[RMDB]
The record gives the reactivity of an RNA of 177 nucleotides to 2A3 and DMS. DMS adducts were read by reverse transcription with MarathonRT. The DMS profile rests on 1,301 reads. It was measured as part of the RMDB library RFMREP.

RNA sequence: GGGAACGACUCGAGUAGAGUCGAAAAGUCUGUGAUGCCCUUAGAUGUCCUGGGCCGCACGCGUGCUACACUGAUGAGUAGAAUGGGUUAAUACUGCAUUUAUUGCUUUCCCUUGACCGAGAGGUCUGCUGUAUGAGAACUUCGGUUCUCAUACAGCAAAAGAAACAACAACAACAAC
Reactivity to 2A3 in 0.01 (KOAc 150mM, MgCl2 10mM, bicine 150mM(pH8.5), 24C), signal-to-noise 2, nucleotides 027 to 126: g020u010c030u030g030u020g050a070u150g030c000c000c000u040u090a130g000a160u140g100u110c020c010u020g040g000g000c000c020g000c000a020c020g070c010g010u070g020c000u090a030c030a010c080u080g050a110u040g000a070g040u070a010g020a100a050u040g000g020g000u020u070a070a020u150a100c000u020g080c010a040u080u000u110a080u130u110g000c000u040u020u020c000c000c000u020u030g000a000c020c000g030a030g000a020g080g000u000c050u010
Reactivity to DMS in 0.01 (KOAc 150mM, MgCl2 10mM, bicine 150mM(pH8.5), 24C), signal-to-noise 1, nucleotides 027 to 126: g000u000c060u010g000u000g010a080u020g010c020c000c020u000u010a070g000a120u000g010u010c030c050u020g010g000g020c050c050g010c070a040c120g020c100g030u000g000c040u000a080c040a110c030u010g020a090u010g000a070g020u000a030g010a050a050u000g000g000g030u010u000a080a120u010a080c040u030g010c010a040u000u000u000a100u010u000g000c060u000u000u000c020c000c010u000u000g020a030c010c000g020a160g000a170g000g010u000c000u000
Conditions: 150 mM KOAc, 10 mM MgCl2 and 150 mM bicine (pH 8.5), 24 C.
For 2A3, 1,786 sequencing reads were counted.